Conditions: 150 mM KOAc, 10 mM MgCl2 and 150 mM bicine (pH 8.5), 24 C. The record gives the reactivity of an RNA of 177 nucleotides to DMS and 2A3.

[RMDB]
RNA sequence: GGGAACGACUCGAGUAGAGUCGAAAAUGCUUCUGCGCGACCUUCUUCAGCACGUCGUUCGCGAAGCGCUGCGCCUUGUAGCCCAAGCCCAUCAUCACCGCGCGCGUCGCGUUGAUCGUCUGCGGGAGCAUUAAUACCGCUUCGGCGGUAUUAAUGCAAAAGAAACAACAACAACAAC
Reactivity to DMS in 0.01 (KOAc 150mM, MgCl2 10mM, bicine 150mM(pH8.5), 24C), signal-to-noise 4, nucleotides 027 to 126: u010g020c020u000u000c020u010g030c030g000c060g010a050c030c080u000u000c070u010u000c110a080g020c060a060c150g000u000c030g010u000u010c050g020c030g000a040a080g020c100g000c040u000g020c130g000c070c050u010u010g020u000a110g020c060c050c020a080a130g000c020c030c020a090u000c080a070u000c050a100c090c010g000c010g020c050g010c110g000u000c030g020c010g010u000u000g000a020u010c130g010u000c020u000g030c040g010g010g000a090
Reactivity to 2A3 in 0.01 (KOAc 150mM, MgCl2 10mM, bicine 150mM(pH8.5), 24C), signal-to-noise 3, nucleotides 027 to 126: u090g020c010u020u040c040u130g010c020g020c010g020a030c030c000u100u120c040u150u080c090a030g060c060a020c060g020u010c010g030u100u070c030g020c000g030a040a010g020c010g000c030u050g010c000g020c030c040u060u130g100u110a030g020c000c030c010a050a060g030c030c000c010a060u100c000a010u030c000a010c040c010g000c010g010c000g020c030g130u140c010g000c010g040u010u050g010a030u030c050g020u020c070u070g020c020g020g000g010a030
2A3 is a SHAPE reagent: it acylates the 2'-hydroxyl of flexible nucleotides of all four kinds. Source: RMDB library OK2TST, as collected in RNAgym. DMS adducts were read by reverse transcription with MarathonRT. For 2A3 the reverse transcriptase was SuperScript II with manganese. The DMS profile rests on 6,415 reads.